Chemical mapping of a 177-nucleotide RNA with 2A3 and DMS. Conditions: 150 mM KOAc, 10 mM MgCl2 and 150 mM bicine (pH 8.5), 24 C. 2A3 adducts were read by reverse transcription with SuperScript II with manganese.
RNA sequence: GGGAACGACUCGAGUAGAGUCGAAAAUUUAGUCUAUGGAGCGAAAGGCAUUGCCUGCAUUCUAAUGCCCAGCAUUGUGGGCAUUAUUGCUGAUCGCUGGGUGAAAGCUAAUAUCCUCUAUGCCUGCUCUAGGAAGGAGGUUCGCCUCCUUCCUAGAAAAAGAAACAACAACAACAAC
Reactivity to 2A3 in 0.01 (KOAc 150mM, MgCl2 10mM, bicine 150mM(pH8.5), 24C), signal-to-noise 2, nucleotides 027 to 126: u000u000u040a030g000u000c050u060a110u240g050g040a080g010c020g050a040a080a040g010g020c030a030u020u100g030c000c030u020g000c010a010u110u000c020u110a070a050u070g080c060c030c020a030g050c090a110u060u110g080u060g030g010g000c000a000u000u070a020u040u060g020c000u060g040a050u040c030g000c030u020g070g080g000u090g050a110a040a000g010c010u000a030a000u040a100u060c000c020u040c020u060a060u110g070c080c030u030g010c000
Reactivity to DMS in 0.01 (KOAc 150mM, MgCl2 10mM, bicine 150mM(pH8.5), 24C), signal-to-noise 3, nucleotides 027 to 126: u000u000u000a020g020u010c040u020a130u030g000g020a050g020c020g000a030a060a300g000g000c010a040u010u000g010c030c010u000g020c030a050u000u000c130u010a060a090u010g000c030c050c050a070g010c150a080u000u000g010u000g010g000g010c000a010u000u000a020u010u020g030c030u010g010a290u010c100g030c010u000g010g020g030u000g000a080a120a080g020c030u010a030a040u000a080u000c000c000u000c140u000a060u000g010c070c030u000g010c150